[RMDB]
Annotation:
Chemical mapping of a 177-nucleotide RNA with DMS and 2A3. Conditions: 150 mM KOAc, 10 mM MgCl2 and 150 mM bicine (pH 8.5), 24 C. Reactivities are given for positions 27 through 126. DMS adducts were read by reverse transcription with MarathonRT. 2A3 adducts were read by reverse transcription with SuperScript II with manganese.

RNA sequence: GGGAACGACUCGAGUAGAGUCGAAAACACCGGGUCUUCGGACCCGGUGAAAAGGAGCCAAAAUAAGAACGGAAAGGGCAGACCGAGCCCAACUCUGUCAAAAAACUGAAGUCUUCGGACUUCAGAAGAUGUAGUUAGUCUUCGGACUAACUACAUCAAAAGAAACAACAACAACAAC
Reactivity to DMS in 0.01 (KOAc 150mM, MgCl2 10mM, bicine 150mM(pH8.5), 24C), signal-to-noise 1, nucleotides 027 to 126: c020a000c020c000g030g000g010u000c000u000u010c230g050g000a000c000c000c000g000g020u020g000a000a020a070a140g010g030a070g010c070c080a040a070a050a100u010a070a120g010a060a100c030g000g000a040a070a240g010g000g010c020a070g010a080c090c120g000a230g000c000c000c000a060a070c200u000c000u000g040u040c060a000a070a060a060a060a140c010u000g000a000a000g000u000c000u000u000c250g050g000a000c000u000u000c000a000g000a000a040
Reactivity to 2A3 in 0.01 (KOAc 150mM, MgCl2 10mM, bicine 150mM(pH8.5), 24C), signal-to-noise 1, nucleotides 027 to 126: c010a010c010c000g000g050g000u020c040u060u130c210g090g010a020c020c020c000g010g010u000g000a010a000a000a030g090g010a070g080c040c040a040a110a000a020u240a100a060g100a130a020c030g010g040a060a080a090g030g000g000c010a000g060a030c000c170g050a020g010c000c000c000a000a020c010u000c010u000g020u020c000a000a040a000a040a170a150c000u010g000a020a020g010u000c000u030u210c260g120g000a000c000u020u000c010a000g000a010a040